Chemical mapping of a 177-nucleotide RNA with DMS and 2A3. The RNA was probed in 150 mM KOAc, 10 mM MgCl2 and 150 mM bicine (pH 8.5) at 24 C.
[RMDB]
RNA sequence: GGGAACGACUCGAGUAGAGUCGAAAAAUUGUUGAAGGAAGGGCCGGACUUUUUGAAUGUAAGCAUCAAACCCUCACCCUGACAAAAAAUGUGGCUUUCUUUCUCUUGAAGAGGUCCUGUCUUUUUCUACUUCCCUUAGGUUCGCCUAAGGGAAGUAAAAAGAAACAACAACAACAAC
Reactivity to DMS in 0.01 (KOAc 150mM, MgCl2 10mM, bicine 150mM(pH8.5), 24C), signal-to-noise 2, nucleotides 027 to 126: a090u010u010g000u010u000g000a040a130g000g010a170a070g020g000g000c050c010g040g000a050c040u000u000u000u000u000g000a070a050u020g000u040a010a090g000c090a040u010c070a110a090a090c070c040c020u010c020a050c060c020c030u030g000a080c100a000a020a050a020a080a070u000g000u020g010g000c050u020u000u010c000u000u000u000c030u000c100u000u040g000a050a020g000a120g000g000u000c000c010u000g000u000c010u000u000u010u020u000c120
Reactivity to 2A3 in 0.01 (KOAc 150mM, MgCl2 10mM, bicine 150mM(pH8.5), 24C), signal-to-noise 2, nucleotides 027 to 126: a000u070u030g000u010u010g070a060a010g010g020a030a030g030g040g000c040c000g020g080a090c050u000u020u080u120u150g060a030a020u080g030u220a030a040g050c000a010u070c100a080a050a050c000c000c020u000c020a030c030c000c000u030g020a030c050a000a100a050a070a030a050u110g080u070g060g000c000u080u110u020c000u000u010u040c030u020c000u080u170g020a020a010g060a040g000g050u000c000c000u040g030u050c000u000u060u020u010u010c040